[RMDB]
RNA sequence: GGGAACGACUCGAGUAGAGUCGAAAAGGCGCCCCUUCUCCGUCCCUAUCCUUCUUUCCGAUUAUUCCUUUGAUGUUCCCCAGCCAGGGAUUUUCAUCCUCGAGCUUCUUAAUUUUCUUCUUGGCCUCAACGCGGGGGUUCGCCCCCGCGAAAAGAAACAACAACAACAAC
Reactivity to 2A3 in 0.01 (KOAc 150mM, MgCl2 10mM, bicine 150mM(pH8.5), 24C), signal-to-noise 1, nucleotides 027 to 129: g010g010c030g010c000c000c000c000u000u000c000u000c000c000g000u010c000c000c000u010a040u080c020c000u030u110c000u010u000u000c000c040g120a110u090u070a190u000u140c040c000u170u100u180g100a060u060g010u000u000c050c010c000c000a030g010c010c020a030g000g000g020a000u000u000u080u190c080a080u050c000c000u010c040g030a050g050c010u000u000c000u000u100a080a110u060u080u110u060c000u010u000c020u010u030g000g010c000c000u070c080a010a010
Source information
This 170-nucleotide RNA was probed chemically with 2A3. Conditions: 150 mM KOAc, 10 mM MgCl2 and 150 mM bicine (pH 8.5), 24 C. Source: RMDB library 15KLIB, as collected in RNAgym. The 2A3 profile rests on 962 reads.